[RMDB]
Structure probing data (DMS and 2A3) for a 207-nucleotide construct. For 2A3, 1,688 sequencing reads were counted.
RNA sequence: GGGAACGACUCGAGUAGAGUCGAAAAGCCGAGUUCCAAGAAAGAAAGGUUAGGGAGUUGCUGAGAGCUGGGUAUUCAGUGUCAAAAAUAGCAAAGCUAAUGGCAAUCAGUUACAACCACGCAAAAGUAUUGUCUGAUAGGUUGAAAGGAGAGGAAGCUUAGGAUAUCAAUUCGUUGAUAUCCUAAGAAAAGAAACAACAACAACAAC
Reactivity to DMS in 0.01 (KOAc 150mM, MgCl2 10mM, bicine 150mM(pH8.5), 24C), signal-to-noise 2, nucleotides 027 to 156: g020c060c010g030a090g040u000u010c020c020a090a220g000a080a080a140g020a040a060a090g000g010u000u000a080g010g040g000a160g010u000u000g020c040u000g000a130g020a140g020c020u000g010g000g010u010a070u000u010c050a050g020u010g030u010c030a050a080a050a100a100u000a050g000c010a040a090a140g000c030u000a060a100u000g000g000c020a120a080u000c040a070g040u000u000a060c020a030a040c030c030a040c030g000c030a030a050a030a100g000u000a050u010u000g010u000c010u010g010a090u010a050g020g030u000u010g000a070a050a100g000g020a080g010a080g010g020a060a110g050
Reactivity to 2A3 in 0.01 (KOAc 150mM, MgCl2 10mM, bicine 150mM(pH8.5), 24C), signal-to-noise 3, nucleotides 027 to 156: g070c010c030g010a010g040u070u000c050c000a010a040g040a050a100a000g060a050a070a040g070g000u090u060a060g010g040g000a040g010u040u060g010c060u040g030a030g000a010g060c040u040g020g050g000u040a070u030u200c020a030g040u030g090u130c050a020a050a030a050a120u120a050g030c050a060a160a020g000c010u080a060a030u080g010g000c000a010a010u020c010a050g030u090u090a050c010a090a030c060c080a030c040g060c020a000a090a100a000g030u060a040u080u070g020u010c020u010g030a080u040a090g000g080u010u040g070a080a040a010g000g010a050g010a010g020g000a030a010g000
Record summary:
Reactivities are rounded to 0.1 and cut off at 0 and 3. The RNA was probed in 150 mM KOAc, 10 mM MgCl2 and 150 mM bicine (pH 8.5) at 24 C.